[RMDB]
RNA sequence: GGGAACGACUCGAGUAGAGUCGAAAAAGUAGCUGACAUGCAGUGAUGUCUCCAUUCUGUCUUCCCUGACAAGUCCAGAGAAGGCACUGGGUUGGCAUCCAACAGCUUGGUCACAAGGGAUUUGGUUCACUAGUUACAAGUUCGCUUGUAACUAGUGAAAAGAAACAACAACAACAAC
Reactivity to 2A3 in 0.01 (KOAc 150mM, MgCl2 10mM, bicine 150mM(pH8.5), 24C), signal-to-noise 9, nucleotides 027 to 126: a000g160u120a010g010c070u010g020a020c010a050u100g010c030a030g020u040g220a000u000g000u000c010u000c020c000a030u150u080c030u040g000u000c000u000u000c010c000c000u000g010a040c080a250a050g070u020c060c010a000g000a000g000a010a000g000g000c010a000c030u050g010g000g070u190u170g020g000c000a010u000c000c000a030a020c020a010g000c000u030u060g100g010u040c030a030c050a150a090g060g010g030a070u100u080u150g130g000u040u010
Reactivity to DMS in 0.01 (KOAc 150mM, MgCl2 10mM, bicine 150mM(pH8.5), 24C), signal-to-noise 4, nucleotides 027 to 126: a080g010u010a060g010c140u010g010a070c060a050u020g010c070a060g030u030g010a000u010g000u000c000u010c010c000a050u010u030c160u030g000u010c010u000u010c000c010c010u000g000a130c080a090a090g010u040c090c010a010g010a030g010a030a010g010g000c000a020c230u010g000g000g000u020u030g000g000c000a010u010c000c030a100a060c080a040g000c000u000u000g010g010u010c030a030c060a120a110g000g000g010a100u010u010u000g010g010u010u000

The data come from the RNA Mapping Database (RMDB), libraries RFM100 and RFMREP. Structure probing data (2A3 and DMS) for a 177-nucleotide construct. Values cover nucleotides 27 to 126. For DMS the reverse transcriptase was MarathonRT.